Source: RMDB library RNAMAK, as collected in RNAgym. The record gives the reactivity of an RNA of 207 nucleotides to 2A3 and DMS. As a SHAPE reagent, 2A3 marks flexible, mostly unpaired nucleotides at the ribose 2'-OH. The RNA was probed in 150 mM KOAc, 10 mM MgCl2 and 150 mM bicine (pH 8.5) at 24 C.
[RMDB]
RNA sequence: GGGAACGACUCGAGUAGAGUCGAAAACGCCAACUUCGGUUGGCGAAAAAAACCUUUGUGCUAGGCAUCUUUUGACGCAAAGUCAACAACCCAUUGGGUUGUUAACUUUGCGAUAAGAUGCUAGCACUCUGGUAAAAAAGGACGAUUCGUCGUCCAAACACCAACAUAGGUUCGCCUAUGUUGGUGUAAAAGAAACAACAACAACAAC
Reactivity to 2A3 in 0.01 (KOAc 150mM, MgCl2 10mM, bicine 150mM(pH8.5), 24C), signal-to-noise 4, nucleotides 027 to 156: c010g000c000c000a010a010c000u050u070c220g140g000u000u000g000g010c020g010a030a000a000a000a000a000a010c020c020u010u000u010g000u000g000c000u030a050g220g120c010a000u000c000u000u100u100u160g160a060c010g000c000a000a000a000g010u010c020a010a000c000a010a000c000c000c120a300u190u300g000g000g000u000u000g000u000u000a000a000c000u000u010u000g000c000g000a000u000a000a000g000a000u000g000c000u000a000g000c000a010c000u000c010u000g000g010u100a110a090a000a010a010a040g010g000a000c000g010a000u060u110c220g060u000c000g000u030c110c030a000a060
Reactivity to DMS in 0.01 (KOAc 150mM, MgCl2 10mM, bicine 150mM(pH8.5), 24C), signal-to-noise 1, nucleotides 027 to 156: c010g000c000c010a000a010c000u000u000c290g050g020u010u030g010g050c040g000a000a000a040a080a030a050a030c000c010u000u000u010g030u000g000c000u000a040g100g010c000a040u000c000u000u000u010u000g050a300c050g000c000a000a000a020g000u000c000a010a010c000a010a010c010c000c000a300u010u000g060g020g000u020u000g020u000u000a020a000c000u000u000u000g020c000g000a030u000a010a020g020a010u000g000c000u000a000g020c010a000c000u000c000u000g000g010u000a000a020a030a070a090a070g010g030a020c010g000a050u000u000c200g000u000c000g010u000c000c000a010a210

For 2A3 the reverse transcriptase was SuperScript II with manganese. DMS adducts were read by reverse transcription with MarathonRT.